Chemical mapping of a 207-nucleotide RNA with 2A3 and DMS.
The DMS profile rests on 2,925 reads.
For 2A3, 2,288 sequencing reads were counted.
DMS adducts were read by reverse transcription with MarathonRT.

RNA sequence: GGGAACGACUCGAGUAGAGUCGAAAACACAAUUCUCUAAGCGAUGAGAAGCGUGUGGAAAAUUAAGGAAGGGCUACGGCUAUAAUCCUAAGAAAGCUUAUCUACAAGCGGAGGUAUUCUCAGAACGAAAACCAUUUGGCGUUCGCGCCAAAUGGAACGAUAUUUAAAACUUCGGUUUUAAAUAUCGAAAAGAAACAACAACAACAAC
Reactivity to 2A3 in 0.01 (KOAc 150mM, MgCl2 10mM, bicine 150mM(pH8.5), 24C), signal-to-noise 4, nucleotides 027 to 156: c040a000c000a020a080u040u000c000u000c010u080a220a210g110c100g080a120u070g000a090g000a010a020g030c040g020u010g000u100g000g010a080a110a030a050u150u110a100a010g020g020a020a020g050g020g000c010u050a000c110g040g000c010u010a030u080a230a070u070c010c020u030a030a050g080a080a080a000g020c020u040u060a040u090c050u100a070c040a130a010g020c040g010g020a010g060g030u070a100u150u020c040u020c040a080g050a140a050c080g030a060a040a020a070c000c000a000u000u010u000g000g000c020g010u020u050c200g000c000g000c070c000a000a000a000u000g010g000a000a000
Reactivity to DMS in 0.01 (KOAc 150mM, MgCl2 10mM, bicine 150mM(pH8.5), 24C), signal-to-noise 2, nucleotides 027 to 156: c010a030c020a080a260u000u000c010u010c000u010a140a170g040c170g030a230u010g000a020g020a040a060g000c220g020u000g010u010g000g000a030a060a080a110u000u030a090a100g020g040a100a140g000g020g030c010u000a070c130g010g000c010u000a120u000a080a090u000c010c040u000a080a070g000a100a090a250g000c070u000u010a070u000c070u010a110c020a050a040g000c060g000g010a060g010g000u000a100u000u000c000u000c010a130g010a090a110c060g000a050a050a070a150c000c000a040u030u000u000g020g010c000g000u000u010c300g050c040g030c000c000a000a010a000u000g000g030a020a070